[RMDB]
RNA sequence: GGGAACGACUCGAGUAGAGUCGAAAAGGACUAUUGUUCAGGCAUGAAGCCUCCACGUGCGUGCGAAAGCACCCGGAAACGGCUGAGCAAAGUUCCGAGCUGAAGGAGGCACGGCUCAAAAUAAAAAGGUGGUACAACUGUUCGCAGUUGUACUACCAAAAGAAACAACAACAACAAC
Reactivity to DMS in 0.01 (KOAc 150mM, MgCl2 10mM, bicine 150mM(pH8.5), 24C), signal-to-noise 4, nucleotides 027 to 126: g000g010a010c000u000a120u000u000g000u000u010c000a020g000g020c000a000u000g000a090a090g040c000c000u000c010c000a300c030g010u000g010c010g050u010g000c000g010a100a120a180g010c000a000c000c000c000g000g000a060a080a150c000g000g010c000u010g000a020g010c010a000a000a000g000u000u020c000c060g000a020g000c000u010g010a070a090g020g010a000g000g010c000a300c010g000g000c000u000c000a110a060a060a080u030a060a090a100a110a050
Reactivity to 2A3 in 0.01 (KOAc 150mM, MgCl2 10mM, bicine 150mM(pH8.5), 24C), signal-to-noise 7, nucleotides 027 to 126: g010g000a010c010u020a100u230u010g000u010u000c000a000g000g000c000a000u010g030a080a020g000c000c000u000c000c000a030c000g000u000g000c000g000u000g000c000g060a080a010a010g000c000a000c000c000c000g000g000a020a030a010c010g000g000c000u000g000a000g000c000a000a000a000g010u080u010c010c030g000a000g000c000u020g010a130a040g010g000a000g000g000c010a010c000g000g000c000u000c000a060a070a000a020u220a010a070a020a020a000
The record gives the reactivity of an RNA of 177 nucleotides to DMS and 2A3. DMS adducts were read by reverse transcription with MarathonRT. 2A3 adducts were read by reverse transcription with SuperScript II with manganese. For 2A3, 40,163 sequencing reads were counted. Reactivities are given for positions 27 through 126. For DMS, 11,208 sequencing reads were counted.